[RMDB]
RNA sequence: GGGAACGACUCGAGUAGAGUCGAAAAGCCACGGAGGGAAAGGCCUGACUGUGGUAAUGAUAGUUGAUCUGCAUACAACCAAGAUCAAUCAGCUUCGCGCCUUCGGCCCGCACUUCGCCAAAACGCAUGAUAUGGACCCUUUCGAGGGUCCAUAUCAAAAAGAAACAACAACAACAAC
Reactivity to DMS in 0.01 (KOAc 150mM, MgCl2 10mM, bicine 150mM(pH8.5), 24C), signal-to-noise 2, nucleotides 027 to 126: g000c030c030a170c050g000g020a300g000g000g000a090a110a140g010g010c020c000u000g020a050c050u000g030u010g000g000u000a050a050u010g000a080u000a090g000u000u000g010a040u000c050u000g010c120a160u010a080c270a080a160c110c080a030a020g000a040u000c010a010a040u000c060a080g010c060u000u010c080g020c080g020c010c040u010u010c040g010g000c030c000c020g000c090a040c030u000u000c020g040c030c060a030a040a080a060c200g030c200a090